[RMDB]
RNA sequence: GGGAACGACUCGAGUAGAGUCGAAAAGUUGAUCCUCGGCCGGAUGGCAUAUAAAGAGGACAAACAAAACCGGUUGCUGCGGGUGCGCAGCGAGGCCAAGGCCAAUGUGCGGCGCUUCGUCGACGACACGCUUGUGUAAAUUCGUUUACACAAGCGUAAAAGAAACAACAACAACAAC
Reactivity to 2A3 in 0.01 (KOAc 150mM, MgCl2 10mM, bicine 150mM(pH8.5), 24C), signal-to-noise 7, nucleotides 027 to 126: g030u010u010g060a270u030c000c000u010c000g030g000c010c000g230g180a250u300g050g010c060a030u130a020u080a180a150a020g020a010g020g000a010c020a010a070a000c010a000a070a000a030c010c000g050g050u090u150g010c020u000g010c020g010g060g110u220g100c040g000c010a020g010c000g000a030g010g000c010c030a040a070g050g000c000c020a040a110u190g040u140g090c040g020g000c010g020c010u060u090c020g040u010c020g020a090c030g010a010c010
Reactivity to DMS in 0.01 (KOAc 150mM, MgCl2 10mM, bicine 150mM(pH8.5), 24C), signal-to-noise 3, nucleotides 027 to 126: g020u000u000g020a180u000c010c010u000c020g000g010c010c010g020g040a110u070g010g030c000a130u030a110u030a080a090a150g000a020g000g000a030c100a050a050a030c040a100a030a160a150c000c010g000g020u010u000g010c040u010g010c060g000g000g020u030g010c010g000c020a020g010c030g000a080g010g000c020c040a120a150g020g000c000c030a120a080u020g010u010g020c060g000g000c080g010c030u010u010c060g000u010c040g000a080c110g010a090c110